[RMDB]
RNA sequence: GGGAACGACUCGAGUAGAGUCGAAAAGAUAUGGAAGGCCCACACCGGACGAUGAAAGAUAUAAAGGAGAUCGGAAACGAUCUCCUUUAUAUCUGGAGUCCGGGUGUACCCUCACCUUCCUAAGUCAGAAUACUAGUUCCUUCGGGAACUAGUAUUCAAAAGAAACAACAACAACAAC
Reactivity to DMS in 0.01 (KOAc 150mM, MgCl2 10mM, bicine 150mM(pH8.5), 24C), signal-to-noise 1, nucleotides 027 to 126: g000a110u030a170u000g010g010a010a010g040g010c300c160c080a110c080a120c030c000g000g040a000c010g000a140u020g000a160a190a030g000a000u000a000u000a000a000a030g020g000a040g000a000u000c010g030g010a140a050a300c020g010a000u000c000u000c000c000u000u000u000a000u000a000u000c000u010g030g030a140g000u010c000c000g040g000g000u010g000u000a160c050c010c230u000c190a280c000c040u000u000c000c000u020a020a150g000u000c210a180
Chemical mapping of a 177-nucleotide RNA with DMS. For DMS, 770 sequencing reads were counted. The reactions ran in a buffer of 150 mM KOAc, 10 mM MgCl2 and 150 mM bicine (pH 8.5), at 24 C.